[RMDB]
RNA sequence: GGGAACGACUCGAGUAGAGUCGAAAAAUAGGCUUAUCAAGAGAGGUGGAGGGACUGGCGCGAUGAAACCCGGCAGCCAGAAAUGGUGCCAGUUCCUGCAGCGGAAACGUUGAAAGAUGAGCCGAUGCGCCUACAGCGUUCGCGCUGUAGAAAAGAAACAACAACAACAAC
Reactivity to DMS in 0.01 (KOAc 150mM, MgCl2 10mM, bicine 150mM(pH8.5), 24C), signal-to-noise 7, nucleotides 027 to 129: a030u010a090g000g030c020u010u010a020u030c020a120a130g050a160g010a140g030g020u040g020g040a050g020g000g010a000c000u060g050g000c040g040c050g010a100u050g020a050a130a100c020c030c030g000g000c040a090g000c020c020a060g010a040a060a040u030g010g000u040g000c010c020a010g010u000u000c000c040u040g000c030a020g030c040g030g020a080a060a070c110g000u000u000g000a100a110a100g010a000u000g010a000g040c000c000g000a050u000g010c110g010c100
Reactivity to 2A3 in 0.01 (KOAc 150mM, MgCl2 10mM, bicine 150mM(pH8.5), 24C), signal-to-noise 9, nucleotides 027 to 129: a000u120a030g000g000c000u010u010a000u020c070a140a010g120a020g020a060g190g110u100g040g100a030g000g000g000a000c000u000g000g000c000g000c010g100a110u120g090a060a050a050c020c010c000g050g010c050a000g050c010c000a030g050a020a030a010u080g030g000u020g000c000c000a000g000u010u000c000c000u030g020c010a010g050c000g040g040a090a080a040c060g060u070u110g060a100a070a010g000a010u000g000a000g000c000c000g010a020u080g020c080g050c010